The data come from the RNA Mapping Database (RMDB), library M2PK90.
This 177-nucleotide RNA was probed chemically with DMS and 2A3.
For 2A3 the reverse transcriptase was SuperScript II with manganese.
The 2A3 profile rests on 1,524 reads.

RNA sequence: GGGAACGACUCGAGUAGAGUCGAAAAUUAAUCCGGCUUUAAGUUGACGAGGGCAGGGUUUAUCGAGACAUCGGCGGGUGCCCUGCGGUCUUCCUGCGACCGUUUGAGGACUGGUAAACCAAUUUAAGCAUGAUCUUUUAUUCGUAAAAGAUCAUGCAAAAGAAACAACAACAACAAC
Reactivity to DMS in 0.01 (KOAc 150mM, MgCl2 10mM, bicine 150mM(pH8.5), 24C), signal-to-noise 2, nucleotides 027 to 126: u000u030a110a100u000c020c020g010g020c050u000u010u000a060a080g000u000u000g000a060c110g000a080g000g010g010c040a050g020g010g020u000u010u000a040u010c060g010a170g010a090c090a060u000c060g010g010c070g010g010g010u000g000c010c010c030u000g020c010g000g000u000c020u000u000c050c030u010g020c150g000a050c010c030g010u000u000u000g010a070g000g000a060c070u000g030g000u010a030a080a090c020c030a060a090u010u010u010a070a190
Reactivity to 2A3 in 0.01 (KOAc 150mM, MgCl2 10mM, bicine 150mM(pH8.5), 24C), signal-to-noise 2, nucleotides 027 to 126: u070u040a000a050u010c010c020g010g000c040u080u090u100a050a010g060u090u170g060a010c030g020a060g010g060g050c020a040g060g000g040u050u100u030a100u110c060g000a050g050a070c050a120u030c040g040g010c030g070g020g050u060g020c000c000c000u020g050c010g000g000u000c000u090u030c000c010u070g020c030g030a070c000c020g020u050u070u120g080a040g000g040a010c010u050g040g010u040a060a010a010c030c000a060a040u100u170u100a090a010